Annotation
The record gives the reactivity of an RNA of 177 nucleotides to 2A3 and DMS. Conditions: 150 mM KOAc, 10 mM MgCl2 and 150 mM bicine (pH 8.5), 24 C. Reactivities are rounded to 0.1 and cut off at 0 and 3. High 2A3 reactivity points to a flexible backbone, as in loops and unpaired stretches.
RNA sequence: GGGAACGACUCGAGUAGAGUCGAAAACCCGCAGUUACGAUCAAACCUUCACCGGCUAAGGCUUCAGUAGCAGGACCCACGCAAAGAUUAUUUUUAACGCCAUCUUGCAUGUCUUUGUUACCGCCUUGUAUAGUGCACCUUUCGAGGUGCACUAUACAAAAGAAACAACAACAACAAC
Reactivity to 2A3 in 0.01 (KOAc 150mM, MgCl2 10mM, bicine 150mM(pH8.5), 24C), signal-to-noise 6, nucleotides 027 to 126: c000c000c010g000c020a030g060u110u130a070c050g020a070u070c090a040a050a070c000c000u050u050c030a020c060c030g000g040c040u060a050a030g000g020c000u090u050c030a040g020u030a010g010c000a020g030g030a010c010c020c040a060c070g040c030a090a060a010g010a010u020u050a140u100u210u080u130u190a110a040c060g050c060c010a030u020c010u010u060g000c010a010u070g010u000c010u070u170u060g010u010u030a020c010c020g030c010c000u000u010
Reactivity to DMS in 0.01 (KOAc 150mM, MgCl2 10mM, bicine 150mM(pH8.5), 24C), signal-to-noise 2, nucleotides 027 to 126: c000c000c000g000c100a050g010u020u000a050c140g000a060u000c090a080a090a080c080c030u000u000c020a040c070c000g000g000c040u020a070a030g000g000c000u040u020c160a030g000u000a020g010c010a040g010g010a050c030c140c130a060c160g000c000a040a010a050g000a050u000u000a060u050u000u010u030u030a070a150c210g000c200c110a060u020c000u000u010g010c000a070u000g000u020c010u070u010u000g030u020u000a040c020c120g000c020c040u030u010